[RMDB]
Source information:
Conditions: 150 mM KOAc, 10 mM MgCl2 and 150 mM bicine (pH 8.5), 24 C. This 207-nucleotide RNA was probed chemically with 2A3 and DMS. As a SHAPE reagent, 2A3 marks flexible, mostly unpaired nucleotides at the ribose 2'-OH. The DMS profile rests on 14,276 reads.
RNA sequence: GGGAACGACUCGAGUAGAGUCGAAAAGGAUGAUUAGGCAGAUUCGAUUGUCUCAACUUCUUCAGCCUUGUCAGCAGAAAUGUUAAGAAGACGGAGAAGCUUCUCUCGGUGGGAAACUGUGAGCUGUCCGCCGCGAUAGUUCGCAAGAGUGCGGUCAAAAAUACACUCAGUUCGCUGAGUGUAUUUUAAAAGAAACAACAACAACAAC
Reactivity to 2A3 in 0.01 (KOAc 150mM, MgCl2 10mM, bicine 150mM(pH8.5), 24C), signal-to-noise 5, nucleotides 027 to 156: g030g000a040u060g020a020u050u150a050g040g000c020a020g090a160u100u120c060g070a080u090u180g060u040c030u030c100a070a120c020u060u030c000u050u050c040a030g020c000c000u040u050g100u080c040a010g000c000a000g040a060a070a030u070g010u070u030a080a050g030a020a020g020a030c040g050g000a040g030a060a030g020c040u120u030c020u020c020u030c040g000g030u060g020g000g010a070a090a060c050u010g000u020g030a010g010c020u010g010u030c010c060g130c100c040g000c140g000a010u020a060g070u060u040c010g000c030a020a030g060a010g080u110g020c060g000g020u040c020a080
Reactivity to DMS in 0.01 (KOAc 150mM, MgCl2 10mM, bicine 150mM(pH8.5), 24C), signal-to-noise 4, nucleotides 027 to 156: g010g010a050u010g010a100u000u000a060g030g020c040a060g020a130u000u010c060g010a200u000u010g020u000c010u000c040a070a190c010u000u000c010u000u000c020a100g020c000c000u000u000g010u000c030a040g010c010a050g010a080a080a100u000g010u000u000a030a060g000a040a050g020a050c040g010g010a050g000a050a070g020c020u000u000c050u000c030u010c040g000g040u000g050g020g010a080a050a070c040u000g010u010g000a040g040c020u000g010u000c010c030g010c130c100g000c090g000a050u000a050g000u000u000c020g010c020a040a120g010a100g020u000g010c030g000g010u030c030a020